[RMDB]
An RNA of 177 nucleotides, treated with DMS and 2A3 and read out base by base. For DMS, 1,762 sequencing reads were counted. The 2A3 profile rests on 1,944 reads. For DMS the reverse transcriptase was MarathonRT. Reactivities are rounded to 0.1 and cut off at 0 and 3. Source: RMDB library TTRDEL, as collected in RNAgym. 2A3 adducts were read by reverse transcription with SuperScript II with manganese. The reactions ran in a buffer of 150 mM KOAc, 10 mM MgCl2 and 150 mM bicine (pH 8.5), at 24 C.
RNA sequence: GGGAACGACUCGAGUAGAGUCGAAAAGAUAUGGACACCUACCCACCUAUAUAGCACUUUGAUCUCGGAAACGAGGGAGUGCGAAAUAUAGAGGGUGUCCUAAGUCAAAGACUGGUUCGCCAGUCAAUCCCUUAACCAAGUUCGCUUGGUUAAGGGAAAAAGAAACAACAACAACAAC
Reactivity to DMS in 0.01 (KOAc 150mM, MgCl2 10mM, bicine 150mM(pH8.5), 24C), signal-to-noise 2, nucleotides 027 to 126: g000a110u000a110u020g000g020a000c000a020c010c010u000a150c000c010c040a300c100c000u000a010u000a020u010a280g030c000a010c000u000u000u020g000a060u000c000u010c000g000g000a060a030a110c010g000a020g010g000g000a000g010u010g000c010g000a020a090a060u000a010u000a010g000a140g020g000g010u000g000u000c000c000u000a020a110g010u000c110a090a060a140g000a000c000u000g000g010u000u000c220g000c000c010a030g020u000c010a060a110
Reactivity to 2A3 in 0.01 (KOAc 150mM, MgCl2 10mM, bicine 150mM(pH8.5), 24C), signal-to-noise 1, nucleotides 027 to 126: g030a080u170a160u240g000g000a000c000a000c010c010u110a230c020c000c010a030c010c010u010a020u030a010u010a060g000c000a020c030u160u140u290g180a260u220c010u040c000g060g000a120a070a060c030g050a010g020g000g030a000g000u010g040c000g000a000a180a000u030a000u000a000g000a040g030g000g000u000g000u000c000c000u000a070a020g080u030c050a180a000a100g000a000c000u000g000g030u080u130c290g050c100c000a030g000u010c000a000a000